Chemical mapping of a 177-nucleotide RNA with DMS and 2A3. For 2A3, 1,854 sequencing reads were counted.
[RMDB]
RNA sequence: GGGAACGACUCGAGUAGAGUCGAAAAGAUAUGGAUCACUGGCUAGCAUCGAUCAUACGUGCAUCGGAAACGAUGUUAUGGGAGCUAGCAGUGAUCCUAAGUCAAAAUCGAAGCUUCGGCUUCGAAAUCCUGCAAGUGAGUUCGCUCACUUGCAGGAAAAAGAAACAACAACAACAAC
Reactivity to DMS in 0.01 (KOAc 150mM, MgCl2 10mM, bicine 150mM(pH8.5), 24C), signal-to-noise 1, nucleotides 027 to 126: g010a040u010a120u000g000g010a000u000c000a000c030u000g030g040c010u000a020g030c000a300u020c180g020a010u030c040a010u000a030c300g000u010g000c020a000u000c010g000g000a050a040a050c000g050a000u000g010u020u000a000u000g000g000g000a040g020c000u000a040g000c010a010g010u010g020a010u000c000c000u000a000a070g010u010c040a130a050a150a210u000c010g010a010a010g010c000u010u040c300g030g000c010u000u010c000g000a000a100a150
Reactivity to 2A3 in 0.01 (KOAc 150mM, MgCl2 10mM, bicine 150mM(pH8.5), 24C), signal-to-noise 1, nucleotides 027 to 126: g000a010u050a010u080g010g000a000u000c000a000c020u010g300g000c000u090a010g030c030a110u300c140g040a020u020c000a020u000a070c300g300u160g020c000a010u010c020g000g000a020a000a010c010g010a000u000g000u080u070a000u000g030g000g040a030g010c000u000a000g000c000a000g000u000g000a000u060c000c000u010a010a000g040u000c000a010a000a000a300u070c010g000a000a000g060c010u060u160c300g200g000c020u040u040c000g010a010a000a010